[RMDB]
RNA sequence: GGGAACGACUCGAGUAGAGUCGAAAACACGACUGAUUCCGCCGACUCCUGUGUCCACUGCACAAAGUCCUGUUGCAGACGGUCACGGUUAAUGCCGGUCAACAGCCGGGCGGCAGCAGGCGGUAUACGUGAUGGUCGAUUUCGAUCGACCAUCACGAAAAGAAACAACAACAACAAC
Reactivity to DMS in 0.01 (KOAc 150mM, MgCl2 10mM, bicine 150mM(pH8.5), 24C), signal-to-noise 1, nucleotides 027 to 126: c090a140c060g000a140c080u000g000a270u010u000c000c000g010c080c030g020a250c200u000c110c030u000g030u000g000u000c000c030a180c010u010g130c000a060c030a050a070a100g020u020c160c040u030g010u030u000g060c020a000g010a060c130g000g000u000c050a010c000g000g000u010u000a080a060u000g030c000c000g010g000u020c010a120a180c180a190g020c040c020g050g000g010c030g000g000c040a020g010c150a090g000g000c000g010g000u000a050u010a070
Reactivity to 2A3 in 0.01 (KOAc 150mM, MgCl2 10mM, bicine 150mM(pH8.5), 24C), signal-to-noise 1, nucleotides 027 to 126: c050a000c040g150a070c050u120g030a060u100u000c010c040g000c000c000g040a040c030u000c020c050u090g000u000g000u000c000c000a040c000u000g050c040a000c000a070a080a000g180u090c040c070u080g060u230u070g040c000a000g110a210c050g080g000u000c000a020c000g000g000u040u120a090a020u170g000c000c000g130g180u060c050a090a070c020a020g020c020c000g090g000g000c000g010g000c010a030g000c000a020g000g000c000g010g020u020a000u010a040
Chemical mapping of a 177-nucleotide RNA with DMS and 2A3. 2A3 is a SHAPE reagent: it acylates the 2'-hydroxyl of flexible nucleotides of all four kinds. 2A3 adducts were read by reverse transcription with SuperScript II with manganese.